RNA sequence: GGGAACGACUCGAGUAGAGUCGAAAAGCAUCGCAAAGCCGCGGCAAGUGGAGUUAGCGAGAAGAGACUAGGCUUUGGUUUCUUCAAGUGAAGCGGUCACCAAUCAGGUGUGGUAGUUACCGUAAAAAUAACCGCUCUUUGUUCGCAAAGAGCGGAACAAUAAUAAAACCUUCGGGUUUUAUUAUUGAAAAGAAACAACAACAACAAC
Reactivity to DMS in 0.01 (KOAc 150mM, MgCl2 10mM, bicine 150mM(pH8.5), 24C), signal-to-noise 1, nucleotides 027 to 156: g060c030a070u030c040g040c010a050a190a190g040c090c020g020c090g000g030c070a130a100g040u010g000g000a070g010u010u000a280g040c000g000a300g020a110a020g010a100g020a100c000u070a080g040g050c090u000u010u000g020g050u000u000u000c010u030u010c010a110a300g000u010g040a130a210g020c020g030g000u000c020a100c010c020a060a100u000c110a100g040g010u000g010u000g010g000u010a070g000u000u000a100c040c010g010u010a000a080a030a110a100u000a120a160c000c000g010c010u000c040u010u000u000g010u000u000c240g040c000a010a020a000g000a060g000c000g010g000a000a020
Reactivity to 2A3 in 0.01 (KOAc 150mM, MgCl2 10mM, bicine 150mM(pH8.5), 24C), signal-to-noise 2, nucleotides 027 to 156: g020c010a020u070c000g030c040a080a030a030g000c050c040g040c040g080g090c160a120a100g050u090g060g030a120g030u160u100a020g040c020g010a020g010a040a000g020a000g000a000c010u010a040g080g180c050u180u120u140g050g000u020u040u030c010u020u040c030a060a020g020u010g130a050a000g010c010g000g050u010c020a000c030c000a040a130u180c060a020g100g040u070g000u040g110g030u040a080g030u050u110a030c000c000g010u060a010a060a100a070a030u130a070a060c010c000g000c000u010c000u000u000u030g000u010u050c130g010c070a010a000a000g000a000g000c000g000g000a000a000